[RMDB]
RNA sequence: GGGAACGACUCGAGUAGAGUCGAAAAGUGGUGUGUGCCUGAGUCCCAGCCACCUGGGAGGCUGAGAUGGAAGAAUCUCUUGAGCUCAGGAGUUCAAGGCUGUGGAGAGUUAUGAUAGCAUUACUGCACUCCAGCCUGCACGACAGAAUGAGACCUGUCUACAGAAUGGAUUCGUCCAUUCUGUAGAAAAAGAAACAACAACAACAAC
Reactivity to DMS in 0.01 (KOAc 150mM, MgCl2 10mM, bicine 150mM(pH8.5), 24C), signal-to-noise 5, nucleotides 027 to 156: g030u000g020g030u010g020u010g020u000g010c000c020u010g000a230g000u000c020c010c010a120g000c010c020a090c080c050u000g020g020g010a110g030g030c030u000g020a050g000a020u000g010g020a160a170g020a110a120u000c020u010c010u000u000g010a080g010c050u010c010a060g010g010a160g000u000u000c050a110a060g010g020c020u000g000u000g040g020a090g000a160g010u000u000a080u000g010a180u010a150g020c040a300u000u000a100c080u000g010c050a140c030u000c010c010a070g030c020c010u000g000c050a070c030g000a090c040a040g010a110a090u010g010a150g000a090c050c020u000g020
Reactivity to 2A3 in 0.01 (KOAc 150mM, MgCl2 10mM, bicine 150mM(pH8.5), 24C), signal-to-noise 6, nucleotides 027 to 156: g060u050g010g020u050g000u020g030u060g080c000c030u030g030a020g070u070c000c000c000a000g020c040c020a080c050c030u020g020g000g020a030g060g010c070u030g010a020g000a030u030g030g090a120a060g020a120a100u010c010u000c020u040u100g070a030g010c010u010c020a010g020g030a050g010u060u100c090a060a030g010g000c010u020g020u100g110g020a060g000a000g020u050u080a040u080g120a200u190a100g140c010a000u040u060a080c020u040g060c060a020c060u020c010c000a000g010c010c000u030g000c050a040c040g120a000c020a020g120a060a070u100g000a030g020a060c010c030u070g020